[RMDB]
RNA sequence: GGGAACGACUCGAGUAGAGUCGAAAAGUAGCUACAUAAAUGGCAGCAGCAAGUACCAUCAUAGCGAGAGGCACAUACAGUUGGAUGACUUGCCCCUCAGGCCUUUAUAGCUGCAGCGGCCACAUGAGAUGGGAAACCCAUUCGUGGGUUUCCCAUCAAAAGAAACAACAACAACAAC
Reactivity to DMS in 0.01 (KOAc 150mM, MgCl2 10mM, bicine 150mM(pH8.5), 24C), signal-to-noise 2, nucleotides 027 to 126: g050u010a060g000c010u000a080c190a050u000a060a060a110u020g020g040c050a120g000c160a120g000c040a060a040g000u000a060c110c050a040u010c100a060u000a040g010c040g020a110g010a070g040g020c010a060c140a070u010a060c040a090g000u000u000g000g000a070u000g000a080c060u000u000g010c010c010c040c070u000c050a050g000g000c040c010u010u010u000a030u000a070g000c040u000g010c020a170g010c170g030g000c010c010a050c110a070u000g000a180